Record summary
The data come from the RNA Mapping Database (RMDB), library RNAMAK. An RNA of 207 nucleotides, treated with 2A3 and DMS and read out base by base. The 2A3 profile rests on 7,196 reads. The DMS profile rests on 9,951 reads.
RNA sequence: GGGAACGACUCGAGUAGAGUCGAAAAUCCUAAGUCGUUCAAUGAUGCAUGGCUAAGCCUAUUUGUCAGAGCUAUCGGAAACGAUAGCUCUUGGAUUUAAUAGGCAAAGCCAUGUUGAGAACGAUAUGGAAAACACGCAAUGUUCGCAUUGCGUGAACACUGACUACUAGUUCGCUAGUAGUCAGUGAAAAGAAACAACAACAACAAC
Reactivity to 2A3 in 0.01 (KOAc 150mM, MgCl2 10mM, bicine 150mM(pH8.5), 24C), signal-to-noise 4, nucleotides 027 to 156: u020c010c000u030a070a020g020u000c010g000u000u000c050a300a300u100g010a020u060g040c000a000u000g000g010c000u020a030a040g010c000c000u000a010u000u010u030g000u010c000a000g000a000g010c010u000a000u000c010g050g010a070a070a030c010g000a000u000a000g000c000u010c010u000u040g000g000a000u060u090u230a000a000u000a000g000g010c020a010a000a000g000c000c010a000u000g000u000u000g000a010g000a000a000c000g000a010u010a060u060g040g050a030a110a030a040c000a010c000g000c000a010a000u000g030u070u130c240g020c100a000u000u000g000c000g000u000g000a000a000
Reactivity to DMS in 0.01 (KOAc 150mM, MgCl2 10mM, bicine 150mM(pH8.5), 24C), signal-to-noise 4, nucleotides 027 to 156: u000c000c000u000a100a240g040u000c000g030u000u000c000a120a100u000g020a080u000g000c000a010u000g000g010c000u000a080a300g000c000c000u000a020u000u000u000g010u010c000a070g000a020g010c010u000a010u000c010g000g010a170a120a220c010g020a020u000a000g040c000u000c000u000u010g040g030a020u000u010u000a010a000u000a030g020g010c000a010a270a070g000c000c010a000u000g000u000u010g010a060g000a020a030c010g020a020u000a140u010g010g010a100a090a110a180c000a030c000g000c000a020a010u010g040u000u020c300g030c010a010u000u000g010c010g020u020g020a060a150